RNA sequence: GGGAACGACUCGAGUAGAGUCGAAAAGGUUAAUCCUUACCUGUUGUCUUAGAAAUAAGACUACAGCACAUGAUGAUUGAAUUCUAUGAAUACGUGAUUAUAUUCUGUAUUCUUAAAGGGUUUGCAAUAUCUUAGGAAUAUUCGUAUUCCUAAGAUAAAAAGAAACAACAACAACAAC
Reactivity to 2A3 in 0.01 (KOAc 150mM, MgCl2 10mM, bicine 150mM(pH8.5), 24C), signal-to-noise 8, nucleotides 027 to 126: g080g000u110u120a050a050u120c000c000u000u050a070c000c010u000g000u020u020g000u000c000u010u010a020g040a050a080a030u020a040a000g000a000c000u010a000c000a010g070c030a040c020a170u190g050a070u100g020a060u130u150g060a070a080u070u010c030u050a090u090g000a010a000u010a010c040g070u050g050a030u050u250a150u070a070u300u030c010u010g000u010a000u010u000c000u020u070a180a150a020g040g010g000u020u030u070g040c020a050a080
Reactivity to DMS in 0.01 (KOAc 150mM, MgCl2 10mM, bicine 150mM(pH8.5), 24C), signal-to-noise 9, nucleotides 027 to 126: g010g010u010u020a070a080u020c010c010u000u010a140c280c000u000g000u000u000g000u000c000u000u000a010g000a140a110a160u000a000a010g000a020c010u000a010c000a010g010c170a130c170a080u010g010a080u010g000a090u010u010g000a070a050u000u000c020u000a070u010g010a010a010u000a000c010g010u010g000a040u010u030a130u010a080u010u000c000u000g000u000a010u000u000c000u000u010a050a080a070g000g000g000u000u000u010g000c100a080a110